[RMDB]
RNA sequence: GGGAACGACUCGAGUAGAGUCGAAAACAUAUCCACUGGCAGACGAACGGCAAAAGCCGAGAAAGCGUGCAUCAGAAACGGAAAGAACCGAAAACGUCAGCCAGUGGUUUCUGAUGCACGAACAAAACGGUAACGUCUCGUUCGCGAGACGUUACCGAAAAGAAACAACAACAACAAC
Reactivity to 2A3 in 0.01 (KOAc 150mM, MgCl2 10mM, bicine 150mM(pH8.5), 24C), signal-to-noise 1, nucleotides 027 to 126: c030a030u200a030u070c020c020a010c000u040g000g000c000a010g000a040c050g000a130a040c040g080g000c050a000a000a000a300g010c010c040g020a040g130a110a180a050g100c000g000u000g030c000a000u000c000a000g020a030a060a000c080g060g110a010a180a050g010a060a050c050c090g000a040a020a020a110c010g030u000c000a010g020c010c000a000g000u000g000g000u000u020u000c000u000g000a000u000g060c020a000c000g000a020a000c010a000a170a020a000
An RNA of 177 nucleotides, treated with 2A3 and read out base by base. Conditions: 150 mM KOAc, 10 mM MgCl2 and 150 mM bicine (pH 8.5), 24 C. For 2A3, 720 sequencing reads were counted. Source: RMDB library OK1LIB, as collected in RNAgym. For 2A3 the reverse transcriptase was SuperScript II with manganese. Values cover nucleotides 27 to 126.